[RMDB]
RNA sequence: GGGAACGACUCGAGUAGAGUCGAAAAGCAGUCGCCGCUAAUGGUAUCUGGCUCCAGUUGGUACCCUGACUACAGUGAUAUUCGUGAAGAUCGCGUGAUCAUUUAUGGCAGUGCCAGUACCGACGUACAGCACUACCUGAUUCGUCAGGUAGUGCUGAAAAGAAACAACAACAACAAC
Reactivity to 2A3 in 0.01 (KOAc 150mM, MgCl2 10mM, bicine 150mM(pH8.5), 24C), signal-to-noise 3, nucleotides 027 to 126: g040c030a000g040u120c100g040c050c010g000c170u260a150a060u200g020g000u020a030u040c010u030g160g000c030u000c060c010a020g000u020u000g010g020u010a020c020c020c000u040g020a090c000u010a010c060a060g000u000g030a010u080a210u130u100c040g010u000g090a130a100g180a300u280c020g000c020g050u020g010a030u000c020a030u010u030u080a120u070g000g000c000a010g020u030g080c060c030a020g000u000a010c000c000g000a020c020g010u120a060
Reactivity to DMS in 0.01 (KOAc 150mM, MgCl2 10mM, bicine 150mM(pH8.5), 24C), signal-to-noise 2, nucleotides 027 to 126: g020c030a050g000u000c090g010c010c010g030c130u010a060a130u020g000g040u010a080u020c020u000g020g010c000u000c070c070a110g040u020u000g010g010u000a030c040c050c010u000g000a030c020u000a140c170a020g000u000g010a010u000a120u010u000c020g050u000g010a110a140g000a170u010c020g000c010g010u000g000a020u000c010a020u010u010u000a090u030g000g010c110a000g010u000g000c120c050a100g010u000a040c010c000g020a050c060g000u010a100
The record gives the reactivity of an RNA of 177 nucleotides to 2A3 and DMS. 2A3 adducts were read by reverse transcription with SuperScript II with manganese. Source: RMDB library OK2TST, as collected in RNAgym. For 2A3, 2,529 sequencing reads were counted. The reactions ran in a buffer of 150 mM KOAc, 10 mM MgCl2 and 150 mM bicine (pH 8.5), at 24 C.